An RNA of 177 nucleotides, treated with 2A3 and DMS and read out base by base.
The data come from the RNA Mapping Database (RMDB), library OK2TRN.
2A3 adducts were read by reverse transcription with SuperScript II with manganese.
Values are in units of 0.01, from 0 to 300, in steps of 10.
For DMS the reverse transcriptase was MarathonRT.
RNA sequence: GGGAACGACUCGAGUAGAGUCGAAAACGUCGCGCCGCCCGUAUUCGAGCGCGCGCGUCGAUCGCGGUGGCGAAUCCGGCGCGUCGAAUGCCGGAUGGUUUCGUCCCGCGUCGGAACGCGGCCGGGACAGGUCGAUUAGCUUCGGCUAAUCGACCUGAAAAGAAACAACAACAACAAC
Reactivity to 2A3 in 0.01 (KOAc 150mM, MgCl2 10mM, bicine 150mM(pH8.5), 24C), signal-to-noise 1, nucleotides 027 to 126: c010g030u030c010g040c010g000c040c000g040c000c030c030g050u040a270u150u230c060g010a040g060c060g030c080g000c010g000c000g060u020c010g030a020u120c020g000c010g070g060u170g050g000c020g040a060a050u000c000c000g010g000c000g040c020g150u250c110g060a100a030u140g000c040c020g050g090a080u120g060g080u030u120u030c030g000u000c000c000c030g000c010g020u000c000g030g000a070a010c020g000c000g020g000c000c020g020g050g000a020
Reactivity to DMS in 0.01 (KOAc 150mM, MgCl2 10mM, bicine 150mM(pH8.5), 24C), signal-to-noise 1, nucleotides 027 to 126: c050g020u000c030g020c040g030c010c040g010c000c010c030g040u020a220u020u010c040g010a050g010c050g000c180g000c000g010c140g010u000c000g000a020u000c040g030c000g000g010u000g020g000c010g020a080a050u000c000c030g010g000c000g010c110g000u000c140g000a060a070u000g030c010c010g010g030a000u000g030g010u000u010u000c020g000u000c020c050c000g010c030g020u000c000g000g000a050a140c060g030c030g010g010c050c020g010g000g010a240